[RMDB]
Source: RMDB library 15KREP, as collected in RNAgym. This 177-nucleotide RNA was probed chemically with DMS and 2A3. In probing experiments dimethyl sulfate is read out at A N1 and C N3, which are open when not base-paired. For DMS, 999 sequencing reads were counted. The reactions ran in a buffer of 150 mM KOAc, 10 mM MgCl2 and 150 mM bicine (pH 8.5), at 24 C.
RNA sequence: GGGAACGACUCGAGUAGAGUCGAAAAGCGGGUCGCCCAGGAAUGGCGGGACCCCACUUCAGCAGGGUCCGCGUUCCAUCCUUUCUUACCUGAUGGCCGGCAUGGUCCCAGCCUCCUCGCUGGCGCCGAAGGGAGAAAGGUUCGCCUUUCUCCCUUCAAAAGAAACAACAACAACAAC
Reactivity to DMS in 0.01 (KOAc 150mM, MgCl2 10mM, bicine 150mM(pH8.5), 24C), signal-to-noise 1, nucleotides 027 to 126: g030c040g000g040g010u010c030g010c050c020c080a130g010g000a020a090u000g030g040c000g030g010g000a020c040c010c010c050a050c090u010u000c160a090g050c150a230g010g000g010u000c010c000g000c020g000u000u010c000c000a120u000c130c070u000u000u010c050u020u020a120c050c030u030g000a070u000g010g030c020c030g000g000c040a020u010g000g000u010c080c010c030a200g000c060c020u000c050c010u010c110g010c040u000g010g000c080g020c100c100
Reactivity to 2A3 in 0.01 (KOAc 150mM, MgCl2 10mM, bicine 150mM(pH8.5), 24C), signal-to-noise 1, nucleotides 027 to 126: g030c040g080g020g000u020c020g010c010c000c020a000g090g070a090a100u210g300g280c050g010g020g070a030c000c060c020c000a040c040u250u160c060a040g150c020a030g040g010g010u030c000c030g020c000g000u050u000c000c000a060u030c000c030u060u220u060c030u100u090a150c030c010u060g020a060u090g090g010c000c000g070g060c040a070u060g000g010u030c000c000c010a010g000c000c000u000c010c000u020c000g050c030u040g020g000c000g020c030c070